[RMDB]
RNA sequence: GGGAACGACUCGAGUAGAGUCGAAAACGCUGGAGCCGUGAUGGGGAGGAGCUGCCGGUCAUCUGCCAGAGCAGCUCAGGCCACAUGCAUGCCCUGGUCCUUCCAGGGGUCACCCGAGAGGAUGCUGGCCAGCAAUCACAUUCGUGUGAUUGCUGGCAAAAGAAACAACAACAACAAC
Reactivity to DMS in 0.01 (KOAc 150mM, MgCl2 10mM, bicine 150mM(pH8.5), 24C), signal-to-noise 1, nucleotides 027 to 126: c170g000c030u000g000g010a110g020c090c040g020u000g000a050u000g000g010g020g000a210g000g000a010g000c020u000g020c010c070g000g010u000c270a080u010c090u010g010c000c010a110g030a120g060c000a010g000c020u000c010a030g010g000c000c050a020c020a030u000g060c090a050u010g000c030c050c000u000g000g020u010c140c180u030u000c020c000a080g000g030g000g030u000c160a090c000c030c010g000a150g000a120g010g010a060u000g030c100u000g000
Reactivity to 2A3 in 0.01 (KOAc 150mM, MgCl2 10mM, bicine 150mM(pH8.5), 24C), signal-to-noise 1, nucleotides 027 to 126: c050g030c050u100g020g020a010g000c000c000g060u050g030a080u070g020g010g010g020a080g000g000a060g010c000u000g000c000c050g000g060u060c110a300u030c070u230g080c030c000a040g000a090g030c010a000g020c000u000c000a000g040g040c000c030a050c020a070u160g080c010a010u070g060c000c050c000u030g000g030u100c020c110u210u000c000c030a000g020g020g050g030u020c030a070c040c000c010g080a090g000a010g150g000a010u010g020c050u050g170